[RMDB]
Notes: Conditions: 150 mM KOAc, 10 mM MgCl2 and 150 mM bicine (pH 8.5), 24 C. Chemical mapping of a 207-nucleotide RNA with 2A3. The data come from the RNA Mapping Database (RMDB), library M2RFPK.
RNA sequence: GGGAACGACUCGAGUAGAGUCGAAAAGUUUACGCUCCAAGAUCGGUGGAUAGCAGCCCUAUCAAUAUCUAGGAGAACUGUGCUAUGUUUAGAAGGUUAGGUAGUCUCUAAACAGAACAAUUUACCUCAUACGUUAGGACGUUCGCGUCCUAACGAACAUAAAGUCCCCGUUCGCGGGGACUUUAUGAAAAGAAACAACAACAACAAC
Reactivity to 2A3 in 0.01 (KOAc 150mM, MgCl2 10mM, bicine 150mM(pH8.5), 24C), signal-to-noise 1, nucleotides 027 to 156: g010u110u060u110a070c090g030c000u000c000c000a020a020g020a080u060c090g090g260u130g080g030a050u060a020g080c110a070g000c020c000c020u000a020u020c020a000a110u120a040u190c020u100a020g000g000a010g000a080a000c030u140g020u050g060c000u010a010u070g000u010u000u000a040g000a140a050g040g000u070u020a010g020g000u020a000g020u010c010u000c000u080a000a000a000c020a020g030a100a000c030a030a010u130u110u070a020c020c010u080c060a080u080a240c000g000u020u000a000g000g000a000c060g010u040u100c300g020c000g030u100c000c000u000a000a000c000g000a000a000